[RMDB]
RNA sequence: GGGAACGACUCGAGUAGAGUCGAAAAUCAAUGGCAAAAGAGUCAUAUGAGAGUGGGGAGUACCAAUGGGCUAUUACACUACUUAAUAAUGUCGUUUUUAAAAAUCCACAGAAUUAUGAAGCCCGAAAGCACAUGAGAAGUUCGCUUCUCAUGUGCUAAAAGAAACAACAACAACAAC
Reactivity to 2A3 in 0.01 (KOAc 150mM, MgCl2 10mM, bicine 150mM(pH8.5), 24C), signal-to-noise 1, nucleotides 027 to 126: u000c080a010a020u020g000g000c010a030a110a080a020g170a120g010u040c000a000u020a210u130g090a140g010a040g040u090g000g000g000g000a000g210u030a050c000c000a060a000u030g040g000g030c040u040a100u300u210a090c030a000c030u130a000c000u080u060a090a000u020a170a010u300g030u050c060g000u000u100u000u000u000a110a190a000a000a000u000c000c000a000c010a000g010a000a040u080u020a040u150g040a120a050g000c060c000c000g000a020a020
Reactivity to DMS in 0.01 (KOAc 150mM, MgCl2 10mM, bicine 150mM(pH8.5), 24C), signal-to-noise 1, nucleotides 027 to 126: u020c090a070a100u010g000g020c010a000a130a200a080g020a070g000u000c030a000u020a050u000g000a030g040a050g010u020g000g000g000g000a060g000u070a110c050c030a130a100u020g000g000g000c000u000a050u000u030a060c100a090c240u020a110c080u000u020a050a030u000a030a070u030g020u000c100g000u000u000u000u000u140a000a040a040a020a010u020c020c070a020c010a040g010a070a000u020u000a120u000g000a010a080g000c000c020c030g000a030a080